[RMDB]
RNA sequence: GGGAACGACUCGAGUAGAGUCGAAAAAAGGAUUUAUGACAUGAUUAGAGGGGUAUUUUUAGGGUAUUAUUCUGACAAGAUGGAUUUUAGUGCACAUGAUCAUUUAAGAACAAUUGUUAUUGCAGUAAUACAGGCACAUGGUGCAGGUCUGAAGUGAAUUCAGGAAGCAAUUCGUUGCUUCCUGAAUAAAAGAAACAACAACAACAAC
Reactivity to DMS in 0.01 (KOAc 150mM, MgCl2 10mM, bicine 150mM(pH8.5), 24C), signal-to-noise 2, nucleotides 027 to 156: a070a090g000g000a120u010u010u010a060u000g020a080c010a070u000g000a140u010u000a140g010a110g030g010g030g000u010a020u020u010u000u000u000a080g010g000g040u000a040u010u010a050u010u000c040u020g000a230c070a030a110g000a100u010g020g020a100u000u000u010u020a090g030u000g000c090a060c060a080u000g010a110u010c050a120u000u000u000a070a080g010a060a060c050a050a070u000u000g010u010u000a040u000u010g010c000a110g040u000a040a100u000a070c060a050g020g020c030a050c080a060u010g020g050u000g010c030a110g020g020u010c040u000g000a070a090g020u000g020a130
Reactivity to 2A3 in 0.01 (KOAc 150mM, MgCl2 10mM, bicine 150mM(pH8.5), 24C), signal-to-noise 3, nucleotides 027 to 156: a000a000g090g000a100u150u120u090a090u180g030a030c020a030u080g020a090u110u140a060g010a040g020g020g000g040u070a110u030u120u000u030u110a040g040g020g000u010a010u050u010a040u140u070c020u040g020a030c030a040a060g050a080u060g100g000a030u040u050u060u110a030g040u010g030c030a060c050a120u050g060a060u060c030a020u040u120u100a040a030g050a050a020c050a060a100u040u080g020u090u060a050u060u110g030c010a000g000u070a000a020u070a070c040a020g010g060c030a020c010a060u020g000g000u050g020c020a010g010g030u030c050u050g050a030a010g120u130g060a040

This 207-nucleotide RNA was probed chemically with DMS and 2A3. 2A3 adducts were read by reverse transcription with SuperScript II with manganese. DMS adducts were read by reverse transcription with MarathonRT. For 2A3, 1,338 sequencing reads were counted.